[RMDB]
RNA sequence: GGGAACGACUCGAGUAGAGUCGAAAACGCUUUGGAACGGAUCCACGCAAAGGUCUGGGUACUUUAGGAAGGCUUCGUCUUUCCGAAGCUGCGCCUGCGGGGAGGGGAGAAGAUUCCAUGGCGAAUAGUCCGGACUAUCGUUCGCGAUAGUCCGGACAAAAGAAACAACAACAACAAC
Reactivity to 2A3 in 0.01 (KOAc 150mM, MgCl2 10mM, bicine 150mM(pH8.5), 24C), signal-to-noise 1, nucleotides 027 to 126: c000g020c000u170u010u000g030g000a020a030c000g050g030a010u010c000c000a030c020g000c200a130a160a040g130g000u030c060u070g010g000g130u130a040c010u080u000u100a190g000g030a040a000g030g000c000u050u110c130g300u050c000u000u010u040c020c020g030a000a000g000c020u040g020c040g000c000c000u020g000c030g040g030g010g090a130g000g000g000g030a150g010a140a000g010a040u000u000c000c000a000u030g030g000c020g000a000a030u100a130
Structure probing data (2A3) for a 177-nucleotide construct. For 2A3 the reverse transcriptase was SuperScript II with manganese. The 2A3 profile rests on 650 reads. The data come from the RNA Mapping Database (RMDB), library OK1LIB. The reactions ran in a buffer of 150 mM KOAc, 10 mM MgCl2 and 150 mM bicine (pH 8.5), at 24 C.